Chemical mapping of a 207-nucleotide RNA with 2A3 and DMS. Values cover nucleotides 27 to 156. The data come from the RNA Mapping Database (RMDB), library M2RFPK. For 2A3, 1,604 sequencing reads were counted.
RNA sequence: GGGAACGACUCGAGUAGAGUCGAAAAAGAUCCACGCUACGGCGUGGAUCACACGUUCAUCCCUAUUGGGACGGAAGUAGGCAUAGUGCUGAAGGAACGCAUUAGUCAUGCGCUACGGCGCAUGACACACAUCAGAGUCACUUCGGUGACUCUGAAACAAUUGGAAGGGGUUCGCCCCUUCCAAUUGAAAAGAAACAACAACAACAAC
Reactivity to 2A3 in 0.01 (KOAc 150mM, MgCl2 10mM, bicine 150mM(pH8.5), 24C), signal-to-noise 3, nucleotides 027 to 156: a010g000a000u000c000c000a000c010g010c000u040a050c300g120g000c000g000u000g000g000a000u000c000a000c000a000c010g020u010u020c010a030u040c010c000c010u100a300u120u300g010g000g010a020c020g010g050a040a010g010u030a020g030g000c060a080u170a260g150u190g150c020u030g010a020a010g020g040a030a020c020g000c020a040u060u130a090g010u010c000a000u010g010c030g020c000u040a040c300g090g000c000g000c010a000u000g000a000c000a000c000a000c000a060u040c010a000g010a000g000u000c000a030c010u050u090c210g060g010u000g000a000c000u000c000u000g000a010a010a000
Reactivity to DMS in 0.01 (KOAc 150mM, MgCl2 10mM, bicine 150mM(pH8.5), 24C), signal-to-noise 1, nucleotides 027 to 156: a080g000a030u000c000c000a000c010g000c000u000a100c210g090g060c000g050u000g030g030a010u000c000a060c090a010c020g000u000u000c010a210u000c000c000c020u000a150u000u030g020g020g040a020c040g040g020a040a100g020u010a150g020g000c060a200u000a110g000u000g000c010u000g000a160a130g020g000a100a080c100g000c010a090u000u000a080g010u000c040a000u000g000c000g070c020u000a090c300g100g000c000g000c000a000u000g000a000c010a030c080a050c110a120u020c010a000g000a010g020u000c030a000c000u000u010c300g040g040u000g020a010c000u010c000u000g000a010a090a110